The record gives the reactivity of an RNA of 207 nucleotides to DMS and 2A3. DMS adducts were read by reverse transcription with MarathonRT. For DMS, 6,954 sequencing reads were counted. The reactions ran in a buffer of 150 mM KOAc, 10 mM MgCl2 and 150 mM bicine (pH 8.5), at 24 C.
RNA sequence: GGGAACGACUCGAGUAGAGUCGAAAAGGAUGUUCGGGUGGCUGCUUAAGCGCUUCUAUACUUAAGUACCGAAUGUUAUACCGUUAUUAUCUAGUGAUAAUAACGAUGCCUAUUUCUAUGAAAUAGAAGCCUGGGACGCGAUAUUCGUAUCGCGUCCGGGUACUUACUGAUUCGUCAGUAAGUACCCAAAAGAAACAACAACAACAAC
Reactivity to DMS in 0.01 (KOAc 150mM, MgCl2 10mM, bicine 150mM(pH8.5), 24C), signal-to-noise 2, nucleotides 027 to 156: g020g000a030u000g000u000u010c000g000g000g050u010g040g040c130u000g000c000u000u000a020a030g020c060g010c180u000u000c160u010a160u000a060c020u000u000a020a030g020u000a070c010c010g020a050a050u000g020u000u010a110u010a030c020c000g020u000u000a010u000u000a000u000c000u000a220g010u010g010a010u000a010a010u000a010a020c000g010a000u000g010c140c010u000a030u000u000u000c020u010a120u000g000a030a030a060u000a010g010a070a070g020c080c030u040g040g050g010a030c000g030c010g000a020u000a030u000u000c300g000u000a000u010c000g010c010g000u000c010c010
Reactivity to 2A3 in 0.01 (KOAc 150mM, MgCl2 10mM, bicine 150mM(pH8.5), 24C), signal-to-noise 7, nucleotides 027 to 156: g070g000a020u040g010u020u010c000g000g010g020u070g060g000c030u010g000c000u010u010a010a000g000c030g050c100u160u080c060u170a150u060a110c000u010u000a010a000g000u010a040c000c000g000a010a000u020g020u060u080a150u060a160c040c020g000u000u000a000u010u000a000u000c100u080a080g100u070g300a000u000a000a000u000a000a000c000g010a020u070g030c000c010u060a170u030u100u020c080u080a130u240g080a050a060a020u030a020g040a070a010g020c030c080u140g040g000g000a000c000g000c000g000a000u000a010u030u090c240g030u020a010u010c000g000c000g000u000c000c000